[RMDB]
RNA sequence: GGGAACGACUCGAGUAGAGUCGAAAAAAGCCGAGGGGAAGCUGGCGGCGGCCGAGGCGGCUGCCGAGCAGCUGCACAAGCAGUCGGACGCCGAGCUGCGGCGGCUGCAGGAGCAGAAGCGCGCGGCCUCGGCUAGGUUAUUCGUAACCUAGCCGAGAAAAGAAACAACAACAACAAC
Reactivity to DMS in 0.01 (KOAc 150mM, MgCl2 10mM, bicine 150mM(pH8.5), 24C), signal-to-noise 3, nucleotides 027 to 126: a110a100g010c030c020g010a170g010g010g010g020a090a080g000c050u000g010g010c050g020g000c060g010g010c000c000g020a100g000g030c050g010g020c000u000g010c000c020g010a130g000c010a020g000c000u000g000c050a080c150a130a170g010c010a040g010u000c010g010g000a160c140g020c030c010g010a080g000c040u010g000c010g010g000c000g000g010c000u010g000c010a050g000g000a170g000c020a030g000a050a050g010c040g010c030g000c010g000g000c020
Reactivity to 2A3 in 0.01 (KOAc 150mM, MgCl2 10mM, bicine 150mM(pH8.5), 24C), signal-to-noise 2, nucleotides 027 to 126: a010a010g050c030c010g020a060g040g000g010g040a040a080g020c060u030g100g040c020g010g010c020g000g000c020c010g030a060g110g090c050g000g020c010u000g010c010c000g000a030g000c000a000g000c020u010g000c000a040c020a100a060g010c010a010g010u030c010g080g080a290c100g100c110c030g060a060g030c030u040g000c020g030g000c000g000g010c010u010g000c010a040g010g130a090g000c020a000g010a060a000g050c040g000c010g000c010g060g000c000
Source: RMDB library OK2TRN, as collected in RNAgym. This 177-nucleotide RNA was probed chemically with DMS and 2A3. For 2A3, 3,527 sequencing reads were counted. Reactivities are given for positions 27 through 126. The RNA was probed in 150 mM KOAc, 10 mM MgCl2 and 150 mM bicine (pH 8.5) at 24 C. DMS adducts were read by reverse transcription with MarathonRT.